[RMDB]
This 207-nucleotide RNA was probed chemically with 2A3. The reactions ran in a buffer of 150 mM KOAc, 10 mM MgCl2 and 150 mM bicine (pH 8.5), at 24 C. Source: RMDB library M2RFPK, as collected in RNAgym.
RNA sequence: GGGAACGACUCGAGUAGAGUCGAAAAGAAAGAAAGAAAGUUCAUUGUUUAUCGGAAACUGUAAACUAUAACCAUUCAAACUUUUCCAGAAGUUAGUUUGAAUAGAAAUUAAAAAGAAACUUCUGAAUAACCUUAUCAUGCUUCGGCAUGAUAAGAACACUCCUGUUAUCUUCGGAUAACAGGAGUGAAAAGAAACAACAACAACAAC
Reactivity to 2A3 in 0.01 (KOAc 150mM, MgCl2 10mM, bicine 150mM(pH8.5), 24C), signal-to-noise 1, nucleotides 027 to 156: g060a000a030a000g120a030a090a000g070a060a270a040g080u110u080c050a050u110u140g040u060u070u040a080u150c070g030g070a100a070a050c030u040g020u060a020a010a020c050u040a060u100a210a020c000c020a000u000u000c010a000a000a000c000u000u000u010u000c060c000a000g000a010a000g000u000u010a000g000u000u010u000g000a000a000u110a110g010a000a050a000u180u280a090a050a020a000a000g000a010a000a000c000u000u000c000u000g000a010a050u040a010a000c000c000u000u000a000u000c010a000u000g000c000u010u040c080g110g000c000a000u000g000a000u000a000a000g000a020a000